RNA sequence: GGGAACGACUCGAGUAGAGUCGAAAACGGGCGCAACGGCGUCGGCAAAUCCACCCUGCUGCGAACCAUCAGUGGCCUGCACCCGGUCACGGCGGGUGGGGUCCGGCUGGGCGGCGAGGCCGUCGAAGUACGUGGAGCAUUUCGAUGCUCCACGUACAAAAGAAACAACAACAACAAC
Reactivity to 2A3 in 0.01 (KOAc 150mM, MgCl2 10mM, bicine 150mM(pH8.5), 24C), signal-to-noise 3, nucleotides 027 to 126: c020g000g050g020c010g010c090a090a120c070g070g000c020g090u030c000g020g000c090a110a080a040u020c000c010a010c020c000c010u070g000c000u020g020c090g060a050a050c020c000a060u110c050a030g040u050g060g010c010c000u120g070c040a060c020c060c000g010g000u070c050a040c040g050g060c100g030g030g000u000g000g020g010g010u010c020c010g000g000c000u050g010g000g030c010g000g010c010g050a080g020g010c000c000g010u030c020g020a160a020
Reactivity to DMS in 0.01 (KOAc 150mM, MgCl2 10mM, bicine 150mM(pH8.5), 24C), signal-to-noise 1, nucleotides 027 to 126: c040g030g000g030c070g000c100a150a050c080g000g000c000g000u000c000g000g010c140a070a080a250u070c000c000a010c050c000c020u020g020c010u000g000c030g000a040a120c040c010a080u020c020a040g000u000g000g000c030c030u050g020c070a060c070c040c050g040g000u030c000a030c000g000g010c160g000g000g000u010g000g000g000g010u000c000c000g000g000c000u030g000g000g010c000g020g000c100g000a050g020g000c040c000g000u010c020g010a120a160
This 177-nucleotide RNA was probed chemically with 2A3 and DMS. Source: RMDB library OK1LIB, as collected in RNAgym. For 2A3, 2,642 sequencing reads were counted. The RNA was probed in 150 mM KOAc, 10 mM MgCl2 and 150 mM bicine (pH 8.5) at 24 C. 2A3 is a SHAPE reagent: it acylates the 2'-hydroxyl of flexible nucleotides of all four kinds.